[RMDB]
RNA sequence: GGGAACGACUCGAGUAGAGUCGAAAAGUCUAAGCAUUUAGGAGUGACUGGCAGGCAAAUCCGCCAGUUGAAUCUGAGGUGUUACGGGGAGCUAAUUUUUAGCGAAGUACCUGAUUCCACACUGUCAUACGAAAAGGAUAUUCGUAUCCUUUUCGUAAAAAGAAACAACAACAACAAC
Reactivity to 2A3 in 0.01 (KOAc 150mM, MgCl2 10mM, bicine 150mM(pH8.5), 24C), signal-to-noise 6, nucleotides 027 to 126: g020u020c010u020a020a000g000c010a030u020u030u150a050g020g010a030g040u180g020a010c000u000g030g000c060a160g090g000c070a110a050a150u080c020c000g000c000c000a000g000u000u010g010a030a100u000c000u020g020a020g070g000u000g000u030u020a020c020g000g010g010g030a060g000c010u020a050a170u100u170u120u120u060a020g000c020g030a120a010g050u030a060c000c000u010g020a040u080u000c030c000a090c010a020c110u100g050u250c030a080
Reactivity to DMS in 0.01 (KOAc 150mM, MgCl2 10mM, bicine 150mM(pH8.5), 24C), signal-to-noise 9, nucleotides 027 to 126: g010u000c030u000a040a060g000c030a020u000u000u000a300g010g000a040g010u010g000a020c000u000g010g010c010a060g020g010c190a100a090a160u020c020c020g000c010c000a010g010u000u000g010a080a110u000c010u000g000a140g000g000u000g000u000u000a100c160g000g010g000g000a130g010c010u030a010a070u010u000u010u010u000a020g010c020g010a090a110g010u010a170c010c010u000g000a070u000u000c020c020a090c170a090c180u000g000u010c170a150